This 177-nucleotide RNA was probed chemically with 2A3 and DMS.
The 2A3 profile rests on 15,070 reads.
DMS adducts were read by reverse transcription with MarathonRT.

[RMDB]
RNA sequence: GGGAACGACUCGAGUAGAGUCGAAAAGACAGUCAGAGAGUGAGACUCUCUGUGUGUCACUGACAGUCUCUGACAGAGUGUCUCACAGACUGUCACUGUGUCACACACACAGACUGUGAGAGUGUGACCUGUACGACUAUUUCGAUAGUCGUACAGGAAAAGAAACAACAACAACAAC
Reactivity to 2A3 in 0.01 (KOAc 150mM, MgCl2 10mM, bicine 150mM(pH8.5), 24C), signal-to-noise 7, nucleotides 027 to 126: g030a000c010a000g020u010c000a010g080a020g040a010g260u050g050a060g030a050c010u000c000u000c010u030g000u010g000u010g010u010c090a090c300u130g040a010c010a020g090u040c020u020c050u230g070a010c010a020g110a020g080u090g010u020c000u000c000a020c010a010g000a010c010u000g000u000c000a000c010u080g010u020g020u020c000a010c000a010c000a010c000a000c010a050g150a210c130u130g020u040g060a080g010a040g040u060g010u030g050a040
Reactivity to DMS in 0.01 (KOAc 150mM, MgCl2 10mM, bicine 150mM(pH8.5), 24C), signal-to-noise 9, nucleotides 027 to 126: g000a020c000a010g010u000c000a130g010a170g020a130g010u000g000a070g010a300c000u000c000u000c000u000g000u000g010u010g000u010c030a060c060u000g020a070c120a080g000u000c020u010c090u010g010a030c020a040g010a060g010u000g000u000c010u000c020a030c070a060g000a020c000u000g000u000c000a070c140u010g010u000g010u000c020a020c010a010c010a120c060a010c090a060g010a120c200u000g010u000g000a080g010a090g020u000g010u000g000a130